[RMDB]
RNA sequence: GGGAACGACUCGAGUAGAGUCGAAAAGAUAUGGAUCAGAUGGGAGCGUUUGGUUCGGAAACGAACCUUACGCGAAGAACAUCUGAGUCCUAAGUCAAAGAAACUCGUUGUUCGCAACGAGUUUCAAGGGGAUAGAAUACUUCGGUAUUCUAUCCCCAAAAGAAACAACAACAACAAC
Reactivity to DMS in 0.01 (KOAc 150mM, MgCl2 10mM, bicine 150mM(pH8.5), 24C), signal-to-noise 2, nucleotides 027 to 126: g010a010u010a020u010g010g010a110u000c000a000g010a000u000g000g000g000a010g010c000g050u000u000u000g000g010u000u000c000g020g010a000a000a020c000g020a010a000c000c000u000u000a000c000g050c000g020a050a110g000a230a270c010a010u000c000u000g000a040g020u010c000c000u010a000a150g000u000c010a110a100a150g000a000a020a000c000u010c000g020u000u000g010u000u030c220g020c000a010a000c000g000a020g010u000u000u000c000a110a110